[RMDB]
RNA sequence: GGGAACGACUCGAGUAGAGUCGAAAAACAACAGAUAGCUGGAACCAGCGUAGAAUUCUACGCAUAUCCAUAGCGAAUGGUACCUGUAAAGAAAAUAAGGGUGGAUGUACAAGUACCAACAGCCGUCCAUGCCAUGGUGAUGUCAAUCACAUAUGCACUCCACUCCAGGAUUCGUCCUGGAGUGGAGAAAAGAAACAACAACAACAAC
Reactivity to 2A3 in 0.01 (KOAc 150mM, MgCl2 10mM, bicine 150mM(pH8.5), 24C), signal-to-noise 2, nucleotides 027 to 156: a000c010a000a000c010a010g060a070u050a090g020c010u000g020g000a080a100c060c010a050g020c000g000u000a030g080a080a260u300u140c000u000a000c000g000c020a040u040a000u110c030c020a030u090a020g010c020g010a010a030u070g000g000u000a020c010c000u000g020u070a120a140a000g130a050a110a080a040u190a090a050g040g030g020u020g010g010a000u040g010u040a020c020a040a020g010u010a000c000c050a030a030c050a030g020c000c000g020u010c000c000a020u060g060c000c010a030u060g130g030u010g000a040u050g120u150c070a080a040u090c000a000c000a090u130a050u110g040c020a010